[RMDB]
RNA sequence: GGGAACGACUCGAGUAGAGUCGAAAAGCAUACGUUACAUAUACUGUGUUCGUAUGCGGUAAGCAACACAGUAUAUGUAAGCUUACCACCGUACGGUGGACAUGCGAAAGCAUGUCCAUCGUACGGAGCAGCAAGUAGCGUUCGCGCUACUUGCUGCAAAAGAAACAACAACAACAAC
Reactivity to 2A3 in 0.01 (KOAc 150mM, MgCl2 10mM, bicine 150mM(pH8.5), 24C), signal-to-noise 1, nucleotides 027 to 126: g000c010a060u080a270c100g100u050u020a010c020a000u020a000u020a030c000u000g010u000g030u000u020c150g010u260a120u280g020c010g000g060u110a070a000g040c000a010a010c000a000c000a020g000u000a000u020a000u020g000u000a000a000g020c000u020u020a050c030c000a020c000c000g000u000a000c000g050g010u000g000g010a000c000a000u000g000c000g070a100a000a010g000c000a000u000g000u000c000c000a000u000c000g000u000a000c000g030g000a000